[RMDB]
RNA sequence: GGGAACGACUCGAGUAGAGUCGAAAAGAUAUGGACAUGUUGUUCCUCAAGUUGCUUUUGACGGAAUUAUGGUCGGAAACGACCAGAAUUCCGAUAAGCAACUUGAGGAACACCAUGUCCUAAGUCACAGUUCCUUAUAGUUCGCUAUAAGGAACUGAAAAGAAACAACAACAACAAC
Reactivity to DMS in 0.01 (KOAc 150mM, MgCl2 10mM, bicine 150mM(pH8.5), 24C), signal-to-noise 3, nucleotides 027 to 126: g010a060u010a300u010g000g000a020c010a010u000g010u000u000g000u000u000c000c000u000c000a010a010g020u000u000g010c000u000u000u010u000g010a300c180g010g000a030a010u000u000a070u010g010g020u000c000g000g010a110a130a250c010g010a020c000c000a000g000a010a030u000u010c000c000g020a050u000a010a010g000c000a000a000c000u000u000g000a000g000g000a000a000c000a010c030c000a000u000g010u000c000c000u000a000a050g010u000c050a240
Reactivity to 2A3 in 0.01 (KOAc 150mM, MgCl2 10mM, bicine 150mM(pH8.5), 24C), signal-to-noise 2, nucleotides 027 to 126: g040a020u080a070u230g020g000a000c000a000u010g010u000u000g010u000u010c000c000u000c000a010a000g010u020u010g010c020u130u130u200u300g300a200c050g000g000a010a010u060u050a040u060g000g040u010c030g010g010a080a110a110c020g010a000c000c000a000g020a000a000u010u000c010c000g010a020u010a000a000g060c000a000a000c000u000u000g010a010g000g000a000a000c010a000c000c000a000u000g010u000c000c000u010a020a000g000u010c010a000
Conditions: 150 mM KOAc, 10 mM MgCl2 and 150 mM bicine (pH 8.5), 24 C. The record gives the reactivity of an RNA of 177 nucleotides to DMS and 2A3. The 2A3 profile rests on 10,466 reads. Reactivities are given for positions 27 through 126.